[RMDB]
RNA sequence: GGGAACGACUCGAGUAGAGUCGAAAACCUGACUGUGCUCAUGUCCAGGCAGGGGGGACAGUGUAUGCAAGAAUAAUUUGGAGUUCCUGCCAGCUCUAACCAGCUUCAUCAGUGGCUGGAUAAAUUGUCUUUAUCGCCGAUUCGUCGGCGAUAAAGAAAAAGAAACAACAACAACAAC
Reactivity to 2A3 in 0.01 (KOAc 150mM, MgCl2 10mM, bicine 150mM(pH8.5), 24C), signal-to-noise 3, nucleotides 027 to 126: c000c030u000g010a000c020u010g040u060g000c010u030c090a080u080g090u020c020c040a000g000g000c010a040g000g000g030g000g030g000a000c000a000g030u040g050u160a150u250g190c060a060a080g070a190a190u300a100a090u090u030u140g010g000a010g000u020u080c000c000u010g000c000c000a010g000c000u010c000u000a070a040c000c000a000g010c000u060u080c020a300u100c080a080g050u020g110g000c000u000g000g000a000u060a000a070a010u120u120g070
Reactivity to DMS in 0.01 (KOAc 150mM, MgCl2 10mM, bicine 150mM(pH8.5), 24C), signal-to-noise 1, nucleotides 027 to 126: c000c000u000g000a030c060u000g000u000g000c030u000c040a080u020g000u010c100c150a190g000g000c010a030g000g020g000g040g080g000a010c010a030g000u000g030u120a090u030g000c090a280a050g040a200a090u000a040a110u020u090u060g150g000a020g000u010u000c030c000u000g000c010c010a040g000c000u000c000u060a090a130c000c030a090g000c000u000u000c020a300u030c240a090g020u000g000g000c000u010g000g000a150u090a000a040a130u060u000g000

Notes: Structure probing data (2A3 and DMS) for a 177-nucleotide construct. Conditions: 150 mM KOAc, 10 mM MgCl2 and 150 mM bicine (pH 8.5), 24 C. The data come from the RNA Mapping Database (RMDB), libraries RFM100 and RFMREP.